Structure probing data (2A3 and DMS) for a 207-nucleotide construct. Source: RMDB library M2RFPK, as collected in RNAgym. The 2A3 profile rests on 1,488 reads. Conditions: 150 mM KOAc, 10 mM MgCl2 and 150 mM bicine (pH 8.5), 24 C.
[RMDB]
RNA sequence: GGGAACGACUCGAGUAGAGUCGAAAAGCACAAGACUUAGAACAUUAUAGCAGUUAGUAGUUGCCUAAACCCAUUGCAAUAUAUGGGACAGUAGAGGUCGCAAGCCUAUACUGUGCGGUGAACAUUCAAAAGGGAUGGUACUUCGGUACCAUCCCAAUCAAUUGUCACUGUUCGCAGUGACAAUUGAAAAAGAAACAACAACAACAAC
Reactivity to 2A3 in 0.01 (KOAc 150mM, MgCl2 10mM, bicine 150mM(pH8.5), 24C), signal-to-noise 2, nucleotides 027 to 156: g010c010a020c040a060a000g060a070c060u100u120a030g020a110a020c040a060u080u040a090u160a050g030c020a000g000u060u170a070g020u120a030g010u070u050g020c000c000u050a160a100a070c010c000c010a000u000u030g000c020a030a000u010a010u010a010u150g000g010g020a000c000a000g010u030a000g000a010g000g010u120c070g070c250a020a050g000c010c000u010a010u000a010c000u010g000u020g060c040g000g020u070g070a030a020c020a050u110u270c100a120a060a090a130g000g000g020a010u000g010g010u000a020c030u020u080c240g030g000u000a000c000c000a000u000c000c000c000a000a000
Reactivity to DMS in 0.01 (KOAc 150mM, MgCl2 10mM, bicine 150mM(pH8.5), 24C), signal-to-noise 2, nucleotides 027 to 156: g020c030a060c010a060a080g000a150c020u000u000a010g040a070a160c030a060u000u000a100u020a110g000c020a060g000u000u000a110g030u010a110g000u000u000g010c000c030u000a110a120a170c010c000c000a030u000u000g020c070a110a190u000a110u000a000u000g010g020g010a050c000a010g010u000a000g000a050g000g100u010c090g000c300a130a270g020c020c050u020a050u000a040c010u000g020u000g000c060g020g040u010g000a090a100c110a200u000u000c050a080a060a140a120g010g020g010a020u000g020g020u000a020c000u000u000c270g030g030u000a010c000c000a000u000c010c000c000a010a010